[RMDB]
Overview:
Source: RMDB libraries RFM100 and RFMREP, as collected in RNAgym. This 177-nucleotide RNA was probed chemically with 2A3 and DMS. The reactions ran in a buffer of 150 mM KOAc, 10 mM MgCl2 and 150 mM bicine (pH 8.5), at 24 C. DMS adducts were read by reverse transcription with MarathonRT.
RNA sequence: GGGAACGACUCGAGUAGAGUCGAAAAUGGGACGUCAAGGUCAGUUCGUAUGCUGCGGGAAAUGGCCGCCGAGGAGGUAGGGCUUACGCUUGCGUUUGUCUGUUAUAUCUUGGUGGACGAGUAGUCGUACGAAUUAGUCAUUCGUGACUAAUUCGUAAAAAGAAACAACAACAACAAC
Reactivity to 2A3 in 0.01 (KOAc 150mM, MgCl2 10mM, bicine 150mM(pH8.5), 24C), signal-to-noise 9, nucleotides 027 to 126: u080g020g010g030a020c020g010u060c040a040a030g060g020u040c030a020g060u050u050c010g020u040a040u130g030c020u020g010c030g020g020g040a050a140a110u130g080g000c010c010g000c010c000g030a040g050g040a030g020g060u100a060g040g020g000c010u010u020a020c020g030c030u040u120g030c010g020u010u030u030g010u000c030u010g130u160u070a130u020a030u090c010u010u040g030g000u030g030g020a020c010g010a020g040u100a010g020u040c040g010
Reactivity to DMS in 0.01 (KOAc 150mM, MgCl2 10mM, bicine 150mM(pH8.5), 24C), signal-to-noise 9, nucleotides 027 to 126: u020g010g000g000a070c050g010u010c080a080a080g010g000u010c040a060g010u000u000c070g010u010a070u020g010c040u010g000c030g010g010g000a060a070a090u020g010g010c020c020g010c010c020g000a050g010g010a100g010g020u010a080g000g000g000c020u000u000a030c030g010c040u010u010g020c030g020u000u000u000g010u000c020u000g000u020u010a060u020a090u010c020u010u000g010g020u010g010g000a060c030g000a100g010u020a080g010u010c050g020